An RNA of 207 nucleotides, treated with DMS and 2A3 and read out base by base. DMS (dimethyl sulfate) methylates the pairing face of unpaired adenines and cytosines. For 2A3 the reverse transcriptase was SuperScript II with manganese.

RNA sequence: GGGAACGACUCGAGUAGAGUCGAAAACCGUAGGAGCAAGAACUACGAUUCUGCGUAGGAUAGACAUCGAAGAACGGACCUUCGAAAGAGGGUCCGGGAGAUGUCCUGAAUCGCUUGCUCCUAAACGGAAAGCAUAACACUUUCGAGUGUUAUGCAAUAGCCGUAGUUUAUUCGUAAACUACGGCUAAAAAGAAACAACAACAACAAC
Reactivity to DMS in 0.01 (KOAc 150mM, MgCl2 10mM, bicine 150mM(pH8.5), 24C), signal-to-noise 1, nucleotides 027 to 156: c000c010g030u010a000g000g000a060g020c030a010a050g010a130a230c000u000a080c000g010a150u000u020c110u000g040c030g050u010a070g040g000a220u010a020g000a020c000a020u000c000g010a190a300g030a080a300c000g020g010a070c030c000u000u010c010g030a170a150a230g000a030g010g010g020u000c000c000g000g000g010a200g000a020u010g000u000c010c050u000g000a130a050u000c040g000c000u010u000g000c010u000c000c000u010a000a010a030c060g000g030a120a120a270g000c000a000u000a030a020c000a000c000u000u000u030c170g010a040g010u010g000u020u000a000u000g020c060a040a010
Reactivity to 2A3 in 0.01 (KOAc 150mM, MgCl2 10mM, bicine 150mM(pH8.5), 24C), signal-to-noise 3, nucleotides 027 to 156: c000c000g010u000a020g000g000a000g010c010a030a010g020a190a100c100u130a050c130g010a020u110u070c030u100g120c100g120u140a060g030g080a060u100a110g020a000c000a000u020c010g200a300a050g020a020a030c000g000g010a000c000c010u010u010c010g020a060a020a070g000a010g000g000g000u010c050c000g000g000g000a010g000a000u000g000u000c020c000u030g050a040a030u040c020g000c020u000u000g000c000u000c000c000u000a010a010a000c000g020g030a170a040a010g000c000a010u000a000a000c010a000c000u090u130u190c270g070a000g030u000g000u010u000a000u010g000c000a000a010